[RMDB]
RNA sequence: GGGAACGACUCGAGUAGAGUCGAAAAGCUGUAACUCACGAAUAAAUUUAGCAAACGUUAAUUCAUCACGUGUAAUGCUAGUUCCAGAAUCAAACAUCACACCACCUUGUUGGUCUUGUGGAAUGCGUGAAAGAGGAACACGUAAUGCCAUAUAAAGGAUUCAGGUGGCAUUCGUGCCACCUGAAUCAAAAGAAACAACAACAACAAC
Reactivity to 2A3 in 0.01 (KOAc 150mM, MgCl2 10mM, bicine 150mM(pH8.5), 24C), signal-to-noise 2, nucleotides 027 to 156: g000c010u010g030u130a000a070c000u010c120a050c010g010a070a100u250a050a040a000u100u110u030a100g070c090a140a020a140c120g000u020u040a090a050u210u100c130a070u050c000a070c040g010u030g040u090a100a070u080g030c040u010a010g000u060u060c030c030a010g140a100a020u070c170a080a070a080c010a020u170c040a050c010a020c060c020a040c000c030u000u050g040u100u010g030g000u030c010u060u050g040u000g000g000a030a030u000g000c000g000u030g070a050a060a010g170a000g030g070a080a040c000a000c000g030u000a010a010u110g010c000c000a000u040a000u020a090a060a050g000